[RMDB]
Background:
An RNA of 207 nucleotides, treated with DMS and 2A3 and read out base by base.
RNA sequence: GGGAACGACUCGAGUAGAGUCGAAAACUGACCGGUGAGCCGGGCGCAGUCGGGGAUGCUCUGCGAAUGGAGGAGAUAUAGAAUCUUAGGCCCCAUUCUGCUGGUGUGUUCUUUGGCAGAUGCAUCCGGUGCUACGUCAGAUGAAACCGCCGGCGACGGACAAGAAUAACUUCGGUUAUUCUUGUCCAAAAGAAACAACAACAACAAC
Reactivity to DMS in 0.01 (KOAc 150mM, MgCl2 10mM, bicine 150mM(pH8.5), 24C), signal-to-noise 1, nucleotides 027 to 156: c030u000g010a030c030c030g050g020u010g020a190g020c020c020g010g010g000c020g000c020a180g000u000c040g020g000g030g050a120u000g020c000u000c000u000g010c010g010a030a040u000g050g010a100g030g010a090g000a070u000a220u010a200g000a180a050u000c020u000u000a130g020g000c030c000c010c000a070u000u000c030u020g070c020u000g000g010u010g020u010g030u000u010c020u010u000u000g080g020c000a050g080a120u000g040c000a000u010c000c020g010g040u000g000c000u000a070c100g000u010c020a060g000a140u010g010a090a150a060c050c030g050c000c030g020g000c020g000a130c160
Reactivity to 2A3 in 0.01 (KOAc 150mM, MgCl2 10mM, bicine 150mM(pH8.5), 24C), signal-to-noise 3, nucleotides 027 to 156: c020u020g050a040c000c030g030g100u010g030a050g070c020c010g010g020g000c030g000c010a010g010u040c020g000g000g110g010a000u020g030c010u010c020u020g010c020g030a010a020u040g030g030a110g090g050a040g100a030u190a020u070a160g200a110a080u080c060u100u110a100g050g040c000c000c000c000a010u050u060c030u160g020c050u080g050g110u050g010u020g010u100u030c000u080u090u220g040g000c030a060g010a190u140g000c000a000u000c010c010g010g000u030g000c000u030a020c030g060u050c020a020g020a070u090g030a100a040a060c020c010g010c050c000g060g010c110g080a060c250
The RNA was probed in 150 mM KOAc, 10 mM MgCl2 and 150 mM bicine (pH 8.5) at 24 C.